Background: This 177-nucleotide RNA was probed chemically with 2A3 and DMS.
[RMDB]
RNA sequence: GGGAACGACUCGAGUAGAGUCGAAAAAGCGAUGGACCCAGGACCUGCGCACAAGAGUGGUGCUGAGGAUUGGCAGUGCCCAUUCCUAUGCCAUCGUGGUCAGUGCGGCCAGGAGCAGGCAGGGCGGGAACGUGGAGGUUUUCGAACCUCCACGUUCAAAAGAAACAACAACAACAAC
Reactivity to 2A3 in 0.01 (KOAc 150mM, MgCl2 10mM, bicine 150mM(pH8.5), 24C), signal-to-noise 1, nucleotides 027 to 126: a010g070c050g060a070u100g030g000a090c010c000c010a030g000g080a220c010c000u020g050c030g000c020a040c000a110a030g070a040g120u090g000g000u020g030c020u110g080a010g030g050a110u010u070g080g000c080a130g210u020g190c000c000c000a030u070u050c020c000u050a050u070g000c040c000a030u040c060g070u020g040g000u030c060a060g080u060g150c060g020g000c000c010a030g070g040a030g050c000a000g030g050c010a010g080g000g000c080g090g040
Reactivity to DMS in 0.01 (KOAc 150mM, MgCl2 10mM, bicine 150mM(pH8.5), 24C), signal-to-noise 2, nucleotides 027 to 126: a030g010c070g000a100u010g030g000a160c010c010c010a050g030g020a140c010c010u010g010c010g030c030a050c080a100a040g000a080g020u000g000g050u000g020c080u010g000a090g000g000a030u000u000g010g000c030a190g020u000g020c130c000c020a070u000u000c010c000u000a090u020g000c120c010a070u000c020g030u000g020g010u000c020a200g010u020g000c160g010g000c020c030a020g000g010a110g030c080a030g000g010c030a080g020g000g000c150g000g000
Notes:
For 2A3, 938 sequencing reads were counted. The RNA was probed in 150 mM KOAc, 10 mM MgCl2 and 150 mM bicine (pH 8.5) at 24 C.